[RMDB]
RNA sequence: GGGAACGACUCGAGUAGAGUCGAAAAUUCUGCCUCAAACAGCUGAAAAGGUAUAUGAGAACGAAAGGCAGCCUUGUGUGAAAUAGACCCAGCCUGGUCAUGGACUCUUCCUAUUGGCUGAAAGGAAGUCUAAAUGCUGAUUCGUCAGCAUUUAGACAAAAGAAACAACAACAACAAC
Reactivity to 2A3 in 0.01 (KOAc 150mM, MgCl2 10mM, bicine 150mM(pH8.5), 24C), signal-to-noise 2, nucleotides 027 to 126: u030u020c000u040g050c000c000u070c030a110a120a230c020a010g030c020u050g030a020a010a050a120g090g060u110a130u020a040u300g050a040g020a070a030c030g050a170a050a020g060g000c000a010g000c000c010u190u110g080u000g000u020g110a060a080a110u100a050g050a030c030c000c000a020g030c030c020u060g010g060u050c010a060u080g050g040a020c000u020c020u050u030c000c000u020a050u010u050g000g000c000u010g020a070a030a000g060g000a050a070
Reactivity to DMS in 0.01 (KOAc 150mM, MgCl2 10mM, bicine 150mM(pH8.5), 24C), signal-to-noise 4, nucleotides 027 to 126: u010u010c020u000g010c070c000u000c110a100a140a180c090a060g010c000u000g000a040a070a070a080g000g020u000a070u010a090u010g000a050g010a070a180c080g020a060a090a060g000g000c030a080g000c030c020u000u010g010u010g030u010g010a060a090a090u000a050g010a110c030c030c080a100g010c040c020u000g010g000u020c080a080u000g000g010a140c050u000c040u000u000c010c010u000a230u000u000g000g010c020u010g000a060a110a060g010g010a080a090
Source: RMDB library OK2TRN, as collected in RNAgym. Structure probing data (2A3 and DMS) for a 177-nucleotide construct. The RNA was probed in 150 mM KOAc, 10 mM MgCl2 and 150 mM bicine (pH 8.5) at 24 C. For 2A3 the reverse transcriptase was SuperScript II with manganese.